An RNA of 177 nucleotides, treated with 2A3 and DMS and read out base by base. Conditions: 150 mM KOAc, 10 mM MgCl2 and 150 mM bicine (pH 8.5), 24 C. DMS adducts were read by reverse transcription with MarathonRT. 2A3 adducts were read by reverse transcription with SuperScript II with manganese. The data come from the RNA Mapping Database (RMDB), library OK2TST.
[RMDB]
RNA sequence: GGGAACGACUCGAGUAGAGUCGAAAACAAUAUUUGCAGAGUAUAUUUUUAAACACCAUCCCAUUUACAAAGAAAAUGUUCCAAUUUGGCUUAAUAGAUGGGAAGAUACUUCUUUGGAAGGUGGAGACUAAAUACGGGAGUUCGCUCCCGUAUUUAGAAAAGAAACAACAACAACAAC
Reactivity to 2A3 in 0.01 (KOAc 150mM, MgCl2 10mM, bicine 150mM(pH8.5), 24C), signal-to-noise 2, nucleotides 027 to 126: c010a090a000u040a070u100u140u240g010c060a010g040a020g250u040a070u010a080u090u100u010u020u060a140a050a010c030a010c010c000a010u010c000c020c000a010u150u180u050a010c000a000a030a000g040a000a040a000a000u110g130u110u040c010c010a020a040u020u000u100g190g000c030u100u160a070a030u040a240g060a020u040g040g000g010a000a000g030a010u010a070c010u010u090c000u040u110u050g040g010a030a020g000g000u030g000g060a040g000a000
Reactivity to DMS in 0.01 (KOAc 150mM, MgCl2 10mM, bicine 150mM(pH8.5), 24C), signal-to-noise 2, nucleotides 027 to 126: c060a110a100u010a040u000u010u010g000c120a090g020a080g030u000a010u000a000u000u000u000u020u000a050a080a100c120a080c050c030a210u010c020c000c000a050u010u000u010a120c040a010a020a030g000a080a010a040a020u000g020u000u000c060c060a030a030u000u010u010g000g010c190u010u010a060a120u010a030g000a010u000g000g020g010a020a020g020a030u000a050c150u000u000c000u000u000u000g010g000a090a060g010g020u000g010g010a100g000a180
Overview
As a SHAPE reagent, 2A3 marks flexible, mostly unpaired nucleotides at the ribose 2'-OH.